[RMDB]
RNA sequence: GGGAACGACUCGAGUAGAGUCGAAAACAACUGUUAUCUUGCCACUGCAUUGUUAACACUCCAACAAAUAGAGUUGAAGUUUAAUACACCUGCUCUACAAAGGGCUGGUGAAGCUGCUAACUUUUGUGAACAACCCUCUUCGGAGGGUUGAAAAGAAACAACAACAACAAC
Reactivity to 2A3 in 0.01 (KOAc 150mM, MgCl2 10mM, bicine 150mM(pH8.5), 24C), signal-to-noise 5, nucleotides 027 to 129: c010a000a000c020u020g010u060u050a070u040c100u060u160g020c000c020a110c170u120g080c020a050u090u060g040u050u040a090a000c030a000c060u000c000c000a010a010c010a020a150a090u250a080g160a000g020u010u000g020a000a000g000u000u030u100a060a030u070a030c000a000c000c010u020g010c010u020c000u050a160c100a050a230a090g010g000g030c010u000g010g010u000g000a020a010g000c020u050g030c010u000a000a010c000u000u010u060u050g070u070g030a040a000
Reactivity to DMS in 0.01 (KOAc 150mM, MgCl2 10mM, bicine 150mM(pH8.5), 24C), signal-to-noise 3, nucleotides 027 to 129: c090a080a060c140u040g030u020u000a040u070c000u020u040g070c040c100a190c160u090g060c000a120u000u000g040u020u000a040a030c120a040c040u050c050c030a080a040c110a070a060a140u090a040g030a110g000u000u000g020a090a000g020u030u030u030a080a070u060a230c000a010c020c010u010g030c000u010c000u000a150c300a080a060a050g040g000g020c010u010g050g010u010g000a000a080g040c020u000g040c080u040a060a050c030u000u000u000u000g010u000g000a100a150

An RNA of 170 nucleotides, treated with 2A3 and DMS and read out base by base. It was measured as part of the RMDB library 15KLIB. For 2A3, 7,906 sequencing reads were counted. The reactions ran in a buffer of 150 mM KOAc, 10 mM MgCl2 and 150 mM bicine (pH 8.5), at 24 C. Values cover nucleotides 27 to 129.